[RMDB]
RNA sequence: GGGAACGACUCGAGUAGAGUCGAAAACUAUGGAGAAUUAUGAACUAGAGAAGCACUGUUACGACUUGUUACGUGACUGUGAUGCUGUAGCUCCCCAUGAUUUCUUCAUCUUUGAUGUAGACAAAGUCAUCUAUUAAGGGUUCGCCCUUAAUAGAUGAAAAGAAACAACAACAACAAC
Reactivity to DMS in 0.01 (KOAc 150mM, MgCl2 10mM, bicine 150mM(pH8.5), 24C), signal-to-noise 5, nucleotides 027 to 126: c030u000a010u000g000g000a010g010a030a010u000u000a010u000g010a050a150c010u000a010g000a030g010a030a020g010c000a010c010u000g000u000u000a010c010g010a120c130u010u000g010u010u010a090c020g020u000g000a000c000u000g000u000g000a030u000g000c000u000g000u000a000g000c080u000c100c300c120c020a020u000g000a010u000u000u000c000u000u000c010a010u000c090u000u000u000g000a120u010g010u010a080g010a140c080a030a030a070g010u010
Reactivity to 2A3 in 0.01 (KOAc 150mM, MgCl2 10mM, bicine 150mM(pH8.5), 24C), signal-to-noise 8, nucleotides 027 to 126: c010u010a020u030g010g000a020g010a030a000u030u010a010u030g030a030a010c020u020a030g000a000g010a180a000g040c000a000c020u010g010u010u010a010c020g040a050c070u130u220g110u290u160a050c010g010u000g010a000c010u000g010u020g020a040u040g000c010u070g050u060a010g010c020u100c020c030c010c010a010u010g010a010u090u160u050c000u010u010c010a020u000c050u050u060u090g090a120u130g070u160a030g020a080c030a020a030a010g040u010